[RMDB]
RNA sequence: GGGAACGACUCGAGUAGAGUCGAAAAGAUAUGGAGUGCGUGGGAGCUCCUCGGAAACGAGAAGAGCGAGGAUCACGAUACUCCUAAGUCAAACGAAGGUGCACUGGUUCGCCAGUGCACCUUCGAACAAAGAAGUUAUGUUCGCAUAACUUCUUUGAAAAGAAACAACAACAACAAC
Reactivity to 2A3 in 0.01 (KOAc 150mM, MgCl2 10mM, bicine 150mM(pH8.5), 24C), signal-to-noise 2, nucleotides 027 to 126: g070a030u070a050u180g010g000a020g000u020g020c030g030u010g010g010g000a020g010c010u020c020c030u000c000g020g020a060a040a050c020g030a010g040a300a130g000a060g010c020g040a250g040g010a010u010c000a000c010g000a030u090a000c000u000c000c000u020a080a010g090u060c070a060a060a080c000g000a010a000g000g000u010g000c040a000c030u000g000g080u110u220c300g060c070c000a020g020u000g000c010a010c020c000u000u000c000g000a000a000
Reactivity to DMS in 0.01 (KOAc 150mM, MgCl2 10mM, bicine 150mM(pH8.5), 24C), signal-to-noise 7, nucleotides 027 to 126: g000a040u000a300u010g000g000a010g030u000g010c010g020u000g000g000g000a060g010c010u000c000c000u000c000g000g010a090a100a170c000g000a020g010a110a080g000a020g010c000g000a060g020g010a060u010c000a000c000g000a070u000a010c000u010c000c010u000a020a080g010u000c040a100a100a220c030g000a010a010g010g020u000g000c000a010c000u000g010g010u000u020c270g010c000c000a000g000u000g000c000a000c000c000u000u000c000g010a040a130